[RMDB]
RNA sequence: GGGAACGACUCGAGUAGAGUCGAAAAGAUAUGGAGGACAGGGAGCUGAGGGUCGGAAACGACCUGGCAGCUUUGAUCUGUCUCCUAAGUCAAAACAUCUCGGUGUACUUCGGUACACCGAGAUGAACAUCAUGGUAUUGUUCGCAAUACCAUGAUGAAAAGAAACAACAACAACAAC
Reactivity to DMS in 0.01 (KOAc 150mM, MgCl2 10mM, bicine 150mM(pH8.5), 24C), signal-to-noise 8, nucleotides 027 to 126: g010a050u000a300u010g000g000a040g020g010a010c000a020g000g000g000a000g020c000u000g010a300g000g000g000u000c000g010g000a030a070a170c000g000a010c000c000u000g000g020c030a010g010c010u000u000u010g000a070u010c000u000g010u000c010u000c000c000u010a030a110g000u000c030a050a080a130a230c010a010u000c000u000c000g000g000u000g010u000a000c000u000u020c150g020g010u000a000c000a000c010c000g000a010g000a000u000g000a050a160
Reactivity to 2A3 in 0.01 (KOAc 150mM, MgCl2 10mM, bicine 150mM(pH8.5), 24C), signal-to-noise 5, nucleotides 027 to 126: g020a020u080a050u140g030g010a090g070g190a020c010a010g030g000g020a020g000c010u010g020a040g020g020g000u010c020g020g020a080a050a020c000g000a000c000c030u040g090g260c010a010g000c000u230u050u020g020a030u010c000u000g000u020c010u010c000c000u020a120a020g040u030c030a000a010a100a150c010a010u000c000u000c000g010g000u000g010u010a010c010u050u080c300g130g000u000a000c000a000c000c000g000a000g000a000u000g000a000a000